[RMDB]
RNA sequence: GGGAACGACUCGAGUAGAGUCGAAAAGCAUACAACUUCGGUUGUAUGCAACGACAGAGUUGACUGUCAUAAACAACGUAACAUGUGAGUUUCAAUAACACAUUGCAGCAGCUUUCGAGCUGCUGAACUGAUCCACGUAAUUCGUUACGUGGAUCAGAAAAGAAACAACAACAACAAC
Reactivity to DMS in 0.01 (KOAc 150mM, MgCl2 10mM, bicine 150mM(pH8.5), 24C), signal-to-noise 3, nucleotides 027 to 126: g000c000a010u000a010c010a000a000c000u010u000c130g050g000u000u000g000u000a000u010g010c000a020a040c160g000a010c010a010g010a150g030u000u000g000a140c010u000g000u000c110a100u000a050a050a070c040a020a040c070g010u000a130a090c140a040u000g000u000g000a050g030u010u000u000c120a080a090u000a090a120c030a020c020a030u000u000g030c020a010g000c000a000g010c000u000u000u000c190g000a070g010c000u000g000c010u000g000a020a070
Reactivity to 2A3 in 0.01 (KOAc 150mM, MgCl2 10mM, bicine 150mM(pH8.5), 24C), signal-to-noise 3, nucleotides 027 to 126: g010c010a000u010a000c010a010a000c020u020u130c240g120g000u010u010g000u000a000u020g040c000a020a020c040g010a010c000a000g000a020g040u010u010g120a250c030u020g000u060c030a010u150a030a050a000c020a030a020c030g110u080a010a050c050a080u010g050u030g040a140g070u040u230u290c130a180a130u160a160a030c060a000c030a070u050u180g080c020a010g030c000a000g020c010u000u060u220c200g100a030g030c010u000g000c010u000g000a000a000